[RMDB]
RNA sequence: GGGAACGACUCGAGUAGAGUCGAAAAGCAACAUGCUACCAUGGGUCGCUGACAACAUGUACCUCAACUCACUUGGUUACAUACCAUGGAGACCAUGCAAACUAACUCAAUUUUGCUAUCACACUAACCAACUUAUACCCUUCGGGGUAUAAGUUGGAAAAGAAACAACAACAACAAC
Reactivity to 2A3 in 0.01 (KOAc 150mM, MgCl2 10mM, bicine 150mM(pH8.5), 24C), signal-to-noise 3, nucleotides 027 to 126: g010c030a000a170c030a110u140g000c010u060a130c030c020a030u030g020g020g010u090c080g120c300u170g040a030c020a080a040c010a050u070g010u060a020c000c000u090c060a120a110c060u050c130a140c050u030u050g040g010u090u050a050c010a040u110a090c030c000a010u020g030g000a030g010a000c050c010a000u050g030c040a060a070a120c050u130a040a020c020u000c200a090a130u020u020u060u050g010c030u080a050u160c050a030c030a010c140u060a040a040
Reactivity to DMS in 0.01 (KOAc 150mM, MgCl2 10mM, bicine 150mM(pH8.5), 24C), signal-to-noise 2, nucleotides 027 to 126: g000c040a090a110c100a090u000g020c020u000a080c040c040a020u010g000g000g000u000c070g010c130u000g000a040c030a070a070c060a040u010g010u000a070c000c030u020c110a030a090c150u020c160a150c210u030u000g010g020u000u000a060c060a110u000a230c000c040a010u000g020g030a090g000a140c290c040a030u000g010c040a060a080a080c150u000a070a100c150u000c060a020a060u010u000u000u000g010c010u010a060u000c140a070c190a100c170u000a100a190